[RMDB]
RNA sequence: GGGAACGACUCGAGUAGAGUCGAAAAGAUAUGGAAAGCGGGAGAGCACAAGCGUGAACUACUCGGACCGGGUCGGAAACGACCCUAGUACGAGCACGCUUGUGCUCGAGGAUCGCUUUCCUAAGUCGAUAUAUCCAGACUUCGGUCUGGAUAUAUCAAAAGAAACAACAACAACAAC
Reactivity to DMS in 0.01 (KOAc 150mM, MgCl2 10mM, bicine 150mM(pH8.5), 24C), signal-to-noise 2, nucleotides 027 to 126: g010a110u000a300u010g000g000a020a010a010g000c000g010g000g010a040g010a030g020c000a030c010a010a010g000c000g000u000g000a040a020c050u010a300c010u000c000g010g020a100c300c200g000g000g010u000c010g010g000a070a100a270c010g020a000c000c000c010u000a000g000u000a150c000g000a020g000c000a010c000g000c000u000u000g010u000g000c000u000c000g000a010g000g000a050u000c010g000c010u000u000u000c000c000u000a010a070g000u000c090
Conditions: 150 mM KOAc, 10 mM MgCl2 and 150 mM bicine (pH 8.5), 24 C. The record gives the reactivity of an RNA of 177 nucleotides to DMS. It was measured as part of the RMDB library TTRINS. DMS adducts were read by reverse transcription with MarathonRT.